[RMDB]
RNA sequence: GGGAACGACUCGAGUAGAGUCGAAAAGAUAUGGAUCAUGGCGUAGCAACAGCGUACUGAGGUCGGAAACGACCUUUACGACAUGCUACGCAUGAUCCUAAGUCAAACAGCUGUGUUCGCACAGCUGCAAGUUACUAAUCUUCGGAUUAGUAACUUGAAAAGAAACAACAACAACAAC
Reactivity to 2A3 in 0.01 (KOAc 150mM, MgCl2 10mM, bicine 150mM(pH8.5), 24C), signal-to-noise 9, nucleotides 027 to 126: g010a010u050a020u100g010g010a000u010c000a010u030g300g130c010g000u000a000g000c050a070a210c140a210g070c020g020u020a050c170u130g050a010g010g000u000c010g030g010a050a030a010c000g000a000c010c020u000u010u010a000c010g010a010c020a100u300g000c000u000a000c000g000c000a000u000g000a000u010c000c000u000a000a000g010u000c020a100a090a140c010a010g000c000u010g010u010g090u170u160c300g040c150a000c000a000g000c000u000g010
Reactivity to DMS in 0.01 (KOAc 150mM, MgCl2 10mM, bicine 150mM(pH8.5), 24C), signal-to-noise 9, nucleotides 027 to 126: g010a030u010a290u000g000g000a010u000c010a010u000g020g020c010g020u000a000g010c000a090a080c300a160g000c000g010u000a010c300u010g000a020g010g010u010c000g010g000a060a050a130c000g000a000c000c000u000u000u000a000c000g010a040c070a300u010g010c010u000a010c000g000c000a000u000g000a000u000c000c000u000a010a050g000u000c020a130a110a270c010a010g000c000u010g020u000g000u000u010c250g020c000a010c000a010g020c000u000g000